[RMDB]
RNA sequence: GGGAACGACUCGAGUAGAGUCGAAAAGAUAUGGAUUAGUGCGAGCGAUAAGAUGCGGUCGGAAACGACCGGCAUCUUUUGACGCUCCCUAAUCCUAAGUCAAAAGUUAAAGCUUCGGCUUUAACAACAAGGAAGAUGAGUUCGCUCAUCUUCCUUGAAAAGAAACAACAACAACAAC
Reactivity to DMS in 0.01 (KOAc 150mM, MgCl2 10mM, bicine 150mM(pH8.5), 24C), signal-to-noise 3, nucleotides 027 to 126: g000a020u000a100u010g000g010a010u000u000a000g010u000g020c230g010a020g010c000g020a130u010a020a020g010a010u000g010c010g000g020u000c000g030g010a030a020a040c000g010a010c000c000g010g040c010a000u000c000u000u000u020u000g010a200c080g010c000u010c010c010c010u000a000a000u000c000c000u000a010a050g000u010c020a100a130a170a150g010u000u000a000a000a020g010c000u010u010c300g050g010c000u000u010u000a000a010c010a160a230
Reactivity to 2A3 in 0.01 (KOAc 150mM, MgCl2 10mM, bicine 150mM(pH8.5), 24C), signal-to-noise 2, nucleotides 027 to 126: g010a010u030a010u060g000g000a010u000u030a060g040u060g300c300g060a000g000c060g090a120u040a300a030g000a010u000g010c010g010g010u010c000g000g010a000a010a030c010g000a000c000c000g010g020c000a000u010c020u030u010u000u090g030a010c010g010c010u000c000c000c010u000a000a000u020c000c000u000a030a000g020u020c010a070a000a090a250g000u030u010a010a000a000g000c030u040u160c300g110g000c000u000u060u000a010a000c000a010a030